[RMDB]
RNA sequence: GGGAACGACUCGAGUAGAGUCGAAAAGAGUUUAGUUACUUGAGUUUUACCAUGAUUAACAUGAAUGAGAUGGCUCUUAUCUUCAUCGGCAGUUACAGCUACGCUUCGGCCCGGACUGUAUUUGGUGCCAUGUCGAUCACUUCGGUGAUCGACAUGGAAAAGAAACAACAACAACAAC
Reactivity to 2A3 in 0.01 (KOAc 150mM, MgCl2 10mM, bicine 150mM(pH8.5), 24C), signal-to-noise 1, nucleotides 027 to 126: g110a020g080u200u150u170a110g060u070u070a100c000u010u040g030a030g030u030u070u140u100a210c100c000a000u030g020a090u210u050a000a020c030a050u030g090a070a010u000g000a020g000a030u120g000g000c000u000c020u040u000a010u000c090u070u000c030a030u030c000g050g000c000a000g000u000u040a070c040a030g030c070u100a080c000g090c100u030u000c000g090g020c000c000c000g000g000a030c020u100g010u000a130u040u100u170g080g010u040g000
Reactivity to DMS in 0.01 (KOAc 150mM, MgCl2 10mM, bicine 150mM(pH8.5), 24C), signal-to-noise 1, nucleotides 027 to 126: g000a160g000u010u050u040a070g000u000u000a020c000u080u050g000a020g020u000u000u020u000a200c070c030a070u000g000a120u110u150a070a110c090a080u000g000a000a040u020g040a090g000a040u000g040g030c090u000c010u010u000a070u030c000u060u000c000a000u000c120g040g070c090a120g000u010u000a090c060a050g000c060u040a070c130g000c060u060u100c040g000g030c000c150c040g000g040a080c020u070g000u000a160u000u000u000g030g010u010g030